[RMDB]
RNA sequence: GGGAACGACUCGAGUAGAGUCGAAAAUUGGUGUUUUGUGUGCUUACCUUGAUCUUAGAUACAACAAAGCUACCGUUGUAGUAGUCAUCUCCAAGGUAGGAGAUAGCAAAGGUGUAAGAUCCUUUGACCAGCAUAAAUCGUUCGCGAUUUAUGCUGGAAAAGAAACAACAACAACAAC
Reactivity to 2A3 in 0.01 (KOAc 150mM, MgCl2 10mM, bicine 150mM(pH8.5), 24C), signal-to-noise 2, nucleotides 027 to 126: u050u060g040g000u060g020u110u000u000u030g120u000g060u050g070c000u050u020a090c000c000u000u100g020a060u000c000u030u160a050g050a040u040a080c070a060a000c000a040a230a010g030c010u060a000c030c000g150u190u160g000u010a020g020u000a000g000u020c000a010u010c050u060c030c000a000a010g060g000u100a040g120g000a120g070a140u010a000g060c020a010a000a000g000g000u000g000u030a000a010g100a100u070c000c000u050u010u010g060a080
Reactivity to DMS in 0.01 (KOAc 150mM, MgCl2 10mM, bicine 150mM(pH8.5), 24C), signal-to-noise 1, nucleotides 027 to 126: u030u000g000g000u000g000u000u010u000u020g000u000g030u000g030c000u000u020a010c020c000u000u020g000a040u030c130u020u010a050g040a030u000a020c090a060a110c170a080a080a220g000c110u030a020c000c100g000u000u010g000u020a040g040u000a050g020u000c080a050u000c030u000c220c000a050a010g010g000u020a000g000g000a020g020a120u050a040g040c010a000a000a000g000g000u000g000u030a100a180g030a150u000c000c000u000u000u000g000a230